[RMDB]
RNA sequence: GGGAACGACUCGAGUAGAGUCGAAAAGCAAAUAACAGAAAGGGAAGGCGAUUAUGUGUUGGUGUAUUUGUUGGGGGUGUGUGUGUGUUGUGUGUAAGGCAGGUUAGAAAUGUAAGGAGGGUGCCCUAGGAGGAUGAGGGAAAGCAUUAGGUUGGUAUCGUCAUUACUACUUCGGUAGUAAUGACGAAAAAGAAACAACAACAACAAC
Reactivity to 2A3 in 0.01 (KOAc 150mM, MgCl2 10mM, bicine 150mM(pH8.5), 24C), signal-to-noise 2, nucleotides 027 to 156: g030c010a000a000a100u140a060a070c040a070g050a050a130a040g040g030g010a060a070g040g030c070g030a040u080u020a040u160g100u020g010u040u020g010g000u030g030u050a150u090u150u110g070u070u020g000g000g000g030g020u030g000u000g000u000g000u000g030u010g010u100u000g000u000g000u020g020u030a040a020g020g000c020a010g000g010u010u020a040g100a070a090a010u130g020u180a020a010g010g010a000g020g000g060u020g060c020c040c000u030a010g010g060a010g010g000a000u040g010a060g000g000g020a030a010a000g050c000a050u050u140a090g030g020u050u000g010g010u040a030
This 207-nucleotide RNA was probed chemically with 2A3.
2A3 adducts were read by reverse transcription with SuperScript II with manganese.
The reactions ran in a buffer of 150 mM KOAc, 10 mM MgCl2 and 150 mM bicine (pH 8.5), at 24 C.
The data come from the RNA Mapping Database (RMDB), library OK3TST.
High 2A3 reactivity points to a flexible backbone, as in loops and unpaired stretches.